[RMDB]
The record gives the reactivity of an RNA of 177 nucleotides to DMS and 2A3. 2A3 adducts were read by reverse transcription with SuperScript II with manganese. It was measured as part of the RMDB library TTRDEL. For 2A3, 4,322 sequencing reads were counted. Conditions: 150 mM KOAc, 10 mM MgCl2 and 150 mM bicine (pH 8.5), 24 C.

RNA sequence: GGGAACGACUCGAGUAGAGUCGAAAAGAUAUGGAGCGAGCGAAGAACACCUGUGUCGGAAACGACAUGGUGGGAGCUCCUCCUAAGUCAAAAGGACAAGAUGUGUCUUCGGACACAUCUUGUCCAACAAGUUAAUGAAGUUCGCUUCAUUAACUUGAAAAGAAACAACAACAACAAC
Reactivity to DMS in 0.01 (KOAc 150mM, MgCl2 10mM, bicine 150mM(pH8.5), 24C), signal-to-noise 6, nucleotides 027 to 126: g010a040u010a300u010g010g010a010g010c160g010a000g020c000g010a090a150g000a160a140c010a000c010c000u010g060u000g010u000c000g000g000a110a060a190c010g000a000c000a020u000g000g010u000g000g000g000a110g010c010u000c000c010u000c000c000u010a020a070g010u020c050a070a060a110a130g010g000a010c000a010a000g010a020u000g010u000g000u000c000u000u000c180g020g000a010c000a000c000a000u000c000u000u000g000u000c000c000a020a030
Reactivity to 2A3 in 0.01 (KOAc 150mM, MgCl2 10mM, bicine 150mM(pH8.5), 24C), signal-to-noise 2, nucleotides 027 to 126: g040a010u090a050u170g000g010a020g060c300g000a000g010c020g140a300a030g070a160a000c030a010c050c090u210g010u030g000u120c010g000g100a070a060a080c020g000a000c010a010u010g010g010u010g000g040g000a010g010c010u000c010c000u000c010c020u000a110a020g060u040c020a000a040a090a180g000g000a000c000a000a000g010a000u020g000u000g000u020c010u080u130c280g050g000a000c010a020c000a000u000c000u000u000g000u000c000c010a010a010